Chemical mapping of a 207-nucleotide RNA with DMS and 2A3. Source: RMDB library OK3TST, as collected in RNAgym. 2A3 adducts were read by reverse transcription with SuperScript II with manganese. For DMS the reverse transcriptase was MarathonRT.

RNA sequence: GGGAACGACUCGAGUAGAGUCGAAAACGACUGGCAGUUUGCUAUCCAUUAUUCUUUUCAUCCGAGACAUUAUGCUACCGUCAUGAAUAACUUAUCCGAACUAACUGCUUCUGGAGGCAAGGUAUUAAUCACUACCAUGGACGGAGACAAAUUAUCAAUCGUAAACCUAGUUCGCUAGGUUUACGAUAAAAGAAACAACAACAACAAC
Reactivity to DMS in 0.01 (KOAc 150mM, MgCl2 10mM, bicine 150mM(pH8.5), 24C), signal-to-noise 3, nucleotides 027 to 156: c060g020a050c040u020g040g020c040a060g030u000u010u020g010c000u000a100u000c030c040a120u000u000a080u000u000c040u000u020u000u000c030a100u010c050c020g020a160g010a130c050a120u010u000a090u010g010c010u000a120c060c030g020u000c020a100u000g010a090a060u000a060a060c090u000u020a070u000c030c020g010a060a080c070u000a060a120c060u000g020c070u000u000c050u000g020g020a110g010g010c090a040a020g020g010u000a060u010u010a090a100u000c060a080c090u000a030c030c020a080u020g020g010a050c020g000g000a200g000a060c060a040a070a060u000u010a220u010c050a150
Reactivity to 2A3 in 0.01 (KOAc 150mM, MgCl2 10mM, bicine 150mM(pH8.5), 24C), signal-to-noise 5, nucleotides 027 to 156: c050g070a030c060u060g020g020c000a070g000u070u120u130g050c030u050a090u080c050c010a040u110u090a060u090u140c040u040u090u070u140c050a090u030c040c040g030a040g020a060c050a050u050u120a100u220g030c020u070a190c000c020g030u030c020a030u070g050a080a040u110a060a040c020u050u080a010u030c020c010g030a010a000c020u020a070a060c030u070g040c000u040u020c030u080g030g040a020g030g040c040a020a030g010g000u030a050u050u110a100a030u060c010a000c090u100a060c040c000a010u020g070g040a010c000g010g000a010g000a020c040a000a060a020u130u090a100u130c040a060
For 2A3, 2,443 sequencing reads were counted.